Chemical mapping of a 207-nucleotide RNA with 2A3. It was measured as part of the RMDB library OK3TST. The 2A3 profile rests on 359 reads. The reactions ran in a buffer of 150 mM KOAc, 10 mM MgCl2 and 150 mM bicine (pH 8.5), at 24 C.
[RMDB]
RNA sequence: GGGAACGACUCGAGUAGAGUCGAAAACAUUUAGAGACAUUUUUGAUUGCCACAACUUAGAAGUAGGGGACGCUCCUGGCAGCUAGUGGGGCCGUGGCCGGGCUGCUGCUCAACAUCCUGCAAUGCACAGGACAGCCCCACAACAAAGACUCACCUGAUAUCGAGUACGGUUCGCCGUACUCGAUAUAAAAGAAACAACAACAACAAC
Reactivity to 2A3 in 0.01 (KOAc 150mM, MgCl2 10mM, bicine 150mM(pH8.5), 24C), signal-to-noise 1, nucleotides 027 to 156: c050a040u150u190u180a080g000a010g050a010c040a040u170u150u070u000u210g170a220u130u160g090c070c000a030c000a140a070c110u160u150a080g010a150a030g100u190a130g000g040g000g040a060c050g010c140u020c010c000u010g070g000c050a020g040c000u090a060g050u040g000g000g000g000c000c030g060u000g030g000c000c000g120g020g040c000u040g000c020u040g010c020u000c020a060a210c110a140u130c000c010u000g000c010a110a300u180g040c080a050c010a160g000g030a000c000a010g020c010c000c010c010a000c010a000a030c000a000a070a020g060a030c000u000c040a030c020c060u100g040